[RMDB]
RNA sequence: GGGAACGACUCGAGUAGAGUCGAAAACGAGAGGUUUCCUGGGAUUUAGGACUUUUAGUACUAAAACUGAGAGACUCUUUGGCAAACUAGGAGAACUUGGUCACCCUGACUCACUGUGCAAAGCUGCUACGCGUGAGCAUUUCGAUGCUCACGCGUAAAAAGAAACAACAACAACAAC
Reactivity to DMS in 0.01 (KOAc 150mM, MgCl2 10mM, bicine 150mM(pH8.5), 24C), signal-to-noise 1, nucleotides 027 to 126: c120g010a110g000a040g000g000u020u010u010c000c010u020g040g010g010a190u000u000u020a010g020g020a040c010u000u000u000u000a050g030u000a050c030u020a010a020a060a120c010u010g010a140g000a090g000a090c120u010c020u000u010u000g030g000c140a130a090a230c020u000a020g020g010a070g000a010a070c060u010u010g000g000u000c040a050c040c000c010u000g000a070c040u010c070a050c060u000g030u010g000c050a060a060a150g010c070u000g000c140